[RMDB]
RNA sequence: GGGAACGACUCGAGUAGAGUCGAAAAUUGACGAGCAAGAAGGGCGCUACUUGUUUAGCUUUGAACAACACAGUAGGUAUGUAAAUGGCAAAUUUAUCGAUCCGCCACACGGUCUUCAUGCCAUUCGAUCAUUGUUCAUUUUCGAAUGAACAAUGAUAAAAGAAACAACAACAACAAC
Reactivity to 2A3 in 0.01 (KOAc 150mM, MgCl2 10mM, bicine 150mM(pH8.5), 24C), signal-to-noise 9, nucleotides 027 to 126: u090u100g060a050c060g020a020g050c020a050a020g040a030a020g040g020g010c040g000c060u020a020c010u030u040g030u060u080u090a030g020c030u140u100u230g060a070a030c030a020a010c020a020c010a050g050u060a020g050g050u110a080u140g110u070a050a090a070u030g020g000c030a050a070a130u140u200u080a180u170c050g020a040u030c030c040g010c040c010a040c000a000c020g040g110u000c000u040u050c030a030u050g000c010c000a030u080u060c030g030
Reactivity to DMS in 0.01 (KOAc 150mM, MgCl2 10mM, bicine 150mM(pH8.5), 24C), signal-to-noise 9, nucleotides 027 to 126: u010u010g010a110c130g010a110g010c030a060a080g010a080a060g010g010g010c040g000c030u000a030c040u000u000g010u000u000u010a110g020c150u000u010u010g010a080a110c090a030a040c080a030c150a040g010u000a030g010g010u010a050u010g010u010a050a050a070u000g010g010c050a040a070a090u010u000u000a070u010c160g010a050u010c060c080g020c030c050a050c100a140c060g000g000u000c020u000u000c080a100u010g010c010c030a080u000u000c120g000